[RMDB]
RNA sequence: GGGAACGACUCGAGUAGAGUCGAAAAGAUAUGGAGGCACAGGCUCCAACAGCUCGGAAACGAGACAUGGAGCUGUAGCCUCCUAAGUCAAAAGGCCUGUCCUUGUGUUCGCACAAGGACAGGCCAAGAUGAUGCAUAAGUUCGCUUAUGCAUCAUCAAAAGAAACAACAACAACAAC
Reactivity to DMS in 0.01 (KOAc 150mM, MgCl2 10mM, bicine 150mM(pH8.5), 24C), signal-to-noise 3, nucleotides 027 to 126: g010a030u010a300u010g010g000a020g000g010c000a040c170a070g000g030c000u000c010c010a020a080c300a180g000c000u000c000g010g000a120a110a220c000g010a000g000a060c130a150u000g000g000a030g000c000u000g010u000a300g000c010c010u000c000c000u000a000a100g000u000c030a030a090a120a060g000g030c000c000u000g000u000c000c000u010u000g080u010g010u010u030c230g010c010a000c010a000a000g000g000a000c000a000g000g010c000c000a000a010

The record gives the reactivity of an RNA of 177 nucleotides to DMS. Values cover nucleotides 27 to 126. Conditions: 150 mM KOAc, 10 mM MgCl2 and 150 mM bicine (pH 8.5), 24 C. The data come from the RNA Mapping Database (RMDB), library TTRDEL.